[RMDB]
RNA sequence: GGGAACGACUCGAGUAGAGUCGAAAAGUUACUUGACUGCGAACCUGCUUGGUGGGCAGACGAAGCGUAUGAAAUCGCGGAGGCUCCGCAGGGCUCGUGCCCAGAGGCGGCUGAGGGCGUCAUCGCCGGUCUAAGUCCAUUUCGAUGGACUUAGACCAAAAGAAACAACAACAACAAC
Reactivity to DMS in 0.01 (KOAc 150mM, MgCl2 10mM, bicine 150mM(pH8.5), 24C), signal-to-noise 2, nucleotides 027 to 126: g010u000u010a090c060u020u020g010a090c030u010g010c030g030a080a090c070c000u000g030c070u020u000g000g050u000g000g030g000c060a020g010a230c040g000a300a120g010c010g010u000a300u010g020a040a130a120u000c020g000c020g030g030a230g000g000c060u000c010c030g000c050a050g020g000g010c080u020c030g000u010g030c020c000c020a160g010a130g010g020c040g020g000c070u020g000a130g050g000g010c040g000u000c070a050u000c040g000c000c050
Reactivity to 2A3 in 0.01 (KOAc 150mM, MgCl2 10mM, bicine 150mM(pH8.5), 24C), signal-to-noise 2, nucleotides 027 to 126: g030u040u040a130c090u210u230g050a030c010u000g000c050g020a040a080c020c010u020g050c020u100u130g150g000u180g020g090g010c060a040g020a080c050g000a030a020g020c010g000u090a060u220g140a030a050a090u100c020g000c000g070g010a010g090g010c010u010c000c020g000c020a040g000g060g000c070u070c000g050u100g040c000c000c000a070g010a070g040g000c010g000g000c090u060g030a040g000g120g000c020g070u040c020a070u080c040g030c020c020
Chemical mapping of a 177-nucleotide RNA with DMS and 2A3. Conditions: 150 mM KOAc, 10 mM MgCl2 and 150 mM bicine (pH 8.5), 24 C. Values cover nucleotides 27 to 126. The data come from the RNA Mapping Database (RMDB), library OK2TRN. The DMS profile rests on 1,369 reads. For 2A3 the reverse transcriptase was SuperScript II with manganese.